The record gives the reactivity of an RNA of 207 nucleotides to 2A3 and DMS. In probing experiments dimethyl sulfate is read out at A N1 and C N3, which are open when not base-paired. For 2A3 the reverse transcriptase was SuperScript II with manganese. DMS adducts were read by reverse transcription with MarathonRT.
RNA sequence: GGGAACGACUCGAGUAGAGUCGAAAAAAAACGCUGGGAAGACGUGCGGAGAUGUUCCGUCGAGUAUCUGAAGCGCGCACGGAUACUAAGACAGCGGAACGGAAUUGCAUACGUCUUCCUGUGCUGAAGCGCGCACGGCAACCGAAAGGUGCGAAAACAAUAUUAUUACCUUCGGGUAAUAAUAUUGAAAAGAAACAACAACAACAAC
Reactivity to 2A3 in 0.01 (KOAc 150mM, MgCl2 10mM, bicine 150mM(pH8.5), 24C), signal-to-noise 4, nucleotides 027 to 156: a000a000a000a020c010g000c000u010g020g000g000a010a000g000a000c010g010u010g020c040g130g220a120g010a090u060g010u010u000c000c010g020u050c010g020a010g000u000a000u000c010u020g040a230a040g010c010g000c010g010c000a010c010g020g000a000u000a000c000u020a060a040g010a010c010a010g000c010g010g000a000a000c000g030g100a150a240u300u140g000c010a040u100a280c010g000u000c000u000u000c000c000u000g000u010g000c000u010g030a120a030g000c010g000c000g010c010a000c000g010g010c000a010a000c000c010g050a080a030a030g000g000u020g010c000g020a080a060a000a020
Reactivity to DMS in 0.01 (KOAc 150mM, MgCl2 10mM, bicine 150mM(pH8.5), 24C), signal-to-noise 2, nucleotides 027 to 156: a100a080a080a050c030g010c010u030g050g000g010a050a010g050a020c010g020u000g070c020g020g010a150g020a180u010g000u000u000c010c000g040u000c020g000a040g000u000a010u000c020u000g020a050a060g010c010g050c020g000c010a300c030g000g000a040u000a010c010u010a170a140g020a070c300a050g000c030g000g010a020a070c000g010g010a110a100u010u000g030c030a090u010a020c050g030u000c010u000u010c010c000u010g000u010g000c010u000g000a070a050g010c040g000c000g040c040a300c020g000g000c020a060a050c030c020g010a150a100a100g010g000u020g010c010g000a080a080a120a150